[RMDB]
RNA sequence: GGGAACGACUCGAGUAGAGUCGAAAACUACCUUGGAAACGGAUUAUCCGGCGAUAAGGAGGAUGCCUUGGCAAAGCACUUUACUUUUUGAAGUGUCCUGCGCGCCCACGACAGCCCUUGAAAAUCCGUGUACUCUGGGUUUCGACCCAGAGUACACAAAAGAAACAACAACAACAAC
Reactivity to 2A3 in 0.01 (KOAc 150mM, MgCl2 10mM, bicine 150mM(pH8.5), 24C), signal-to-noise 3, nucleotides 027 to 126: c070u200a230c000c000u000u050g030g040a050a050a000c000g040g000a030u140u010a070u270c010c000g010g020c080g070a070u050a090a070g020g010a000g070g020a070u140g040c010c000u070u100g030g000c050a020a040a060g030c000a020c000u050u090u040a070c050u050u180u130u180u230g050a030a000g000u010g020u090c020c030u050g000c030g000c000g010c000c000c000a030c070g060a000c000a000g010c020c000c000u020u080g040a060a030a010a040u070c020c030
Reactivity to DMS in 0.01 (KOAc 150mM, MgCl2 10mM, bicine 150mM(pH8.5), 24C), signal-to-noise 2, nucleotides 027 to 126: c030u050a260c000c020u010u020g020g000a150a200a010c010g000g000a210u000u050a110u050c000c180g000g000c070g030a220u010a000a060g020g070a140g020g000a070u040g030c000c060u020u010g000g100c260a070a070a030g010c000a050c000u000u000u000a070c200u040u020u000u100u040g010a000a090g000u000g000u010c060c100u000g000c060g100c040g030c010c010c000a120c160g020a180c250a140g000c020c000c000u000u050g000a070a090a050a070u020c040c040